[RMDB]
RNA sequence: GGGAACGACUCGAGUAGAGUCGAAAAUCGAAAGGUAAUCCCGGCAAAGGAAAGUGCUGAGAGGCGCGAGUACGAGCCGGGACAUGCCGGAGUCACUGCGUACGUUCUGAAGAACGGGCCAGGGAGUCUCACCGGGAGAGUUCGCUCUCCCGGUGAGAAAAGAAACAACAACAACAAC
Reactivity to 2A3 in 0.01 (KOAc 150mM, MgCl2 10mM, bicine 150mM(pH8.5), 24C), signal-to-noise 1, nucleotides 027 to 126: u080c000g000a040a000a000g010g000u020a030a000u060c000c000c000g000g020c000a190a090a010g000g000a030a000a000g010u000g000c030u010g070a030g000a010g060g000c010g000c020g050a000g000u000a000c010g000a010g000c000c000g080g000g000a030c000a010u040g020c000c000g000g000a000g030u040c000a020c060u010g030c060g120u060a050c040g030u000u030c030u140g300a300a280g000a020a010c000g000g000g000c040c000a000g000g030g000a010g040u020